RNA sequence: GGGAACGACUCGAGUAGAGUCGAAAAGCUUAAUAACCUGCGCUGAGCCCUUCUCCCCCAGCUUCCCUGUGUCCUAGGGAAUUGGAAGGUCAUCCUUCACAGGAUCGUGUGGAAGUCCUGCUCGGGGUCCAAACAUGGUAAUUCGUUACCAUGUUAAAACCCAAAUAGAAUUCGUUCUAUUUGGGUUAAAAGAAACAACAACAACAAC
Reactivity to DMS in 0.01 (KOAc 150mM, MgCl2 10mM, bicine 150mM(pH8.5), 24C), signal-to-noise 3, nucleotides 027 to 156: g010c050u020u010a080a120u010a070a100c000c020u000g020c000g010c040u010g010a070g010c020c010c020u000u000c040u010c020c000c000c020c020a110g020c080u000u000c000c010c000u010g020u010g010u000c070c040u000a130g010g010g010a060a080u000u000g020g000a080a080g020g020u000c100a110u000c020c000u000u010c060a130c060a040g000g000a050u010c040g070u000g030u020g030g010a100a080g010u000c030c060u000g000c040u020c040g010g020g020g010u010c040c050a100a040a030c010a020u000g000g010u000a010a090u000u000c250g040u000u000a010c000c000a010u000g010u000u000a030a070
Reactivity to 2A3 in 0.01 (KOAc 150mM, MgCl2 10mM, bicine 150mM(pH8.5), 24C), signal-to-noise 2, nucleotides 027 to 156: g010c000u160u120a060a020u080a180a130c000c030u160g040c130g010c080u060g030a030g040c010c000c010u100u050c120u060c000c010c000c000c000a000g010c000u020u000c000c010c000u070g030u020g020u070c010c040u050a080g000g030g070a040a070u050u020g100g000a020a010g020g020u170c060a090u200c030c000u030u050c010a010c020a080g030g010a040u060c020g000u070g020u100g090g010a030a000g000u040c020c010u030g020c010u020c050g000g000g000g000u030c030c000a050a010a010c000a000u000g000g000u010a010a010u000u060c020g000u000u000a000c000c000a000u000g000u000u000a010a010
Annotation
Conditions: 150 mM KOAc, 10 mM MgCl2 and 150 mM bicine (pH 8.5), 24 C. An RNA of 207 nucleotides, treated with DMS and 2A3 and read out base by base. The DMS profile rests on 10,356 reads. Reactivities are given for positions 27 through 156.